Source: RMDB library M2PK50, as collected in RNAgym.
This 177-nucleotide RNA was probed chemically with 2A3 and DMS.

RNA sequence: GGGAACGACUCGAGUAGAGUCGAAAACAUCGCGUAUUCGUACGCGAUGGUAGGGCUGUUUUUCUCGCUGACUUUCAGCCCCAAACAAAAAAGUCAGCAAAUUACGCGUAUCCUUCGGGAUACGCAACCUUAAGUUGCAUUUCGAUGCAACUUAAGGAAAAGAAACAACAACAACAAC
Reactivity to 2A3 in 0.01 (KOAc 150mM, MgCl2 10mM, bicine 150mM(pH8.5), 24C), signal-to-noise 4, nucleotides 027 to 126: c000a000u000c000g010c000g010u010a020u030u090c240g050u050a000c000g000c000g000a000u000g000g020u060a060g000g000g000c000u010g010u020u000u000u010u010c090u040c090g010c010u000g010a000c000u010u010u000c000a000g010c000c000c010c070a020a020a020c020a000a000a000a000a000a000g000u000c000a000g010c000a000a000a000u010u010a020c030g010c010g000u000a000u000c000c010u020u070c170g080g000g000a000u000a000c000g010c000a000a010
Reactivity to DMS in 0.01 (KOAc 150mM, MgCl2 10mM, bicine 150mM(pH8.5), 24C), signal-to-noise 3, nucleotides 027 to 126: c010a000u000c000g020c010g030u000a010u010u010c200g030u000a010c000g000c000g020a000u000g000g000u000a070g010g010g020c010u010g000u000u000u000u000u000c060u010c270g000c010u010g000a020c000u000u000u000c010a000g010c000c000c000c140a020a020a250c040a000a000a020a000a010a000g010u000c000a010g010c000a000a020a020u010u010a060c220g010c000g010u000a000u000c000c000u000u020c170g030g010g010a010u000a010c000g020c000a000a020

The 2A3 profile rests on 17,396 reads. The DMS profile rests on 4,909 reads.